[RMDB]
RNA sequence: GGGAACGACUCGAGUAGAGUCGAAAAGACGCUAUGCGGAGACUAGUCGUGAAAACGUCUAGUCGAUCUACUUUGAGCAUUGUAGAUCAGAAGUGCUCGAAUCAUCGAAAAGAUGAUGCAUAGCGGAGGGUUAUGAUUUGUUCGCAAAUCAUAACCCAAAAGAAACAACAACAACAAC
Reactivity to 2A3 in 0.01 (KOAc 150mM, MgCl2 10mM, bicine 150mM(pH8.5), 24C), signal-to-noise 4, nucleotides 027 to 126: g090a010c000g000c000u010a000u000g000c010g020g040a070g000a010c000u000a000g010u040c000g000u030g060a050a040a060a030c000g000u000c000u000a000g020u000c000g010a000u000c000u030a100c040u040u040u110g020a040g010c020a030u000u070g170u210a140g040a210u160c060a030g100a230a000g050u010g000c000u010c020g010a020a020u030c000a010u000c000g090a200a140a070a030g000a000u010g000a020u060g000c000a010u000a000g000c010g030g000a050
Reactivity to DMS in 0.01 (KOAc 150mM, MgCl2 10mM, bicine 150mM(pH8.5), 24C), signal-to-noise 2, nucleotides 027 to 126: g010a200c000g030c010u030a000u000g040c000g000g020a150g010a020c000u000a000g020u000c000g000u000g000a140a020a100a000c000g000u000c010u020a000g000u010c040g000a060u020c160u000a080c060u010u020u010g030a040g000c050a040u010u020g040u000a100g000a120u000c270a070g000a060a070g010u000g000c010u020c040g020a030a020u000c000a000u020c010g000a110a010a100a150g030a000u000g000a030u010g000c000a000u000a000g000c000g000g000a070

This 177-nucleotide RNA was probed chemically with 2A3 and DMS. Reactivities are given for positions 27 through 126.